Background:
This 207-nucleotide RNA was probed chemically with DMS. It was measured as part of the RMDB library M2RFPK. The RNA was probed in 150 mM KOAc, 10 mM MgCl2 and 150 mM bicine (pH 8.5) at 24 C. For DMS, 1,708 sequencing reads were counted.
[RMDB]
RNA sequence: GGGAACGACUCGAGUAGAGUCGAAAACAUGGGGAACUACAUCUGUGUCGCGAGUUCGAUUCUCGCCAGGGCCUGGUCCUGUAGCUCCGUUGGUAGAGCAAGCUGUUCCCCGGACACUUGUCGUCAUAAAAGUUGCCCCCGUUCGCGGGGGCAACAACACCAUUCAGAAGUUCGCUUCUGAAUGGUGAAAAGAAACAACAACAACAAC
Reactivity to DMS in 0.01 (KOAc 150mM, MgCl2 10mM, bicine 150mM(pH8.5), 24C), signal-to-noise 1, nucleotides 027 to 156: c050a050u020g020g000g010g000a020a110c040u010a100c050a100u010c050u020g010u000g050u000c070g000c000g030a010g030u010u000c070g030a300u000u000c000u010c000g000c000c000a050g000g000g030c070c070u030g050g000u000c010c030u000g000u000a070g020c000u010c010c300g000u000u000g010g010u030a120g000a030g030c020a130a070g010c060u000g000u010u000c010c000c000c010g010g010a030c060a050c190u000u000g010u000c020g020u010c040a100u000a050a070a040a080g010u000u000g010c000c000c000c000c000g060u000u000c250g050c090g050g000g010g080g060c000a000a000c000a030a140